[RMDB]
An RNA of 207 nucleotides, treated with DMS and 2A3 and read out base by base. 2A3 adducts were read by reverse transcription with SuperScript II with manganese. It was measured as part of the RMDB library OK3TST. The RNA was probed in 150 mM KOAc, 10 mM MgCl2 and 150 mM bicine (pH 8.5) at 24 C.
RNA sequence: GGGAACGACUCGAGUAGAGUCGAAAAGGAAGAAGGCAUGCCAGUCUACCCCAAGCCCUCCAUUGGAAUGCUGAAAAUCUAAACAAUGUGAUUUGGCAAUUUCAUUUCUUUUCUGUUGUGGGCCAGUAGUCCUUAGAUGUUGGGGAAGGGGGUAGUCCCACAGUUUGAAAUUCGUUUCAAACUGUGGAAAAGAAACAACAACAACAAC
Reactivity to DMS in 0.01 (KOAc 150mM, MgCl2 10mM, bicine 150mM(pH8.5), 24C), signal-to-noise 2, nucleotides 027 to 156: g020g010a050a030g020a090a080g020g010c020a070u000g020c020c040a110g010u000c030u000a080c000c000c000c000a130a300g010c020c010c020u020c080c050a190u000u000g010g010a030a030u010g000c100u010g010a040a010a040a060u000c010u020a150a170a130c160a130a160u010g010u000g010a040u000u000u000g010g020c030a040a090u000u000u010c030a060u000u000u000c010u000u010u010u000c080u000g020u000u000g030u000g000g020g010c060c030a110g030u000a080g010u010c020c010u000u000a110g020a110u000g000u000u000g010g030g010g000a070a170g000g000g000g030g020u000a020g010u010c060
Reactivity to 2A3 in 0.01 (KOAc 150mM, MgCl2 10mM, bicine 150mM(pH8.5), 24C), signal-to-noise 1, nucleotides 027 to 156: g060g010a030a070g030a010a020g040g040c050a030u120g030c060c000a060g030u000c040u030a010c000c010c000c000a100a000g070c000c000c000u060c040c000a030u030u050g020g000a020a020u000g040c020u030g090a110a000a000a000u040c090u180a060a170a070c090a100a120u200g040u040g180a060u080u030u000g020g000c000a060a180u050u030u030c010a040u020u100u060c030u100u120u110u020c050u080g110u100u040g000u090g020g020g000c000c000a020g040u090a010g040u020c000c010u030u010a090g000a100u090g020u120u050g030g030g010g110a050a060g030g000g000g000g030u020a000g020u030c000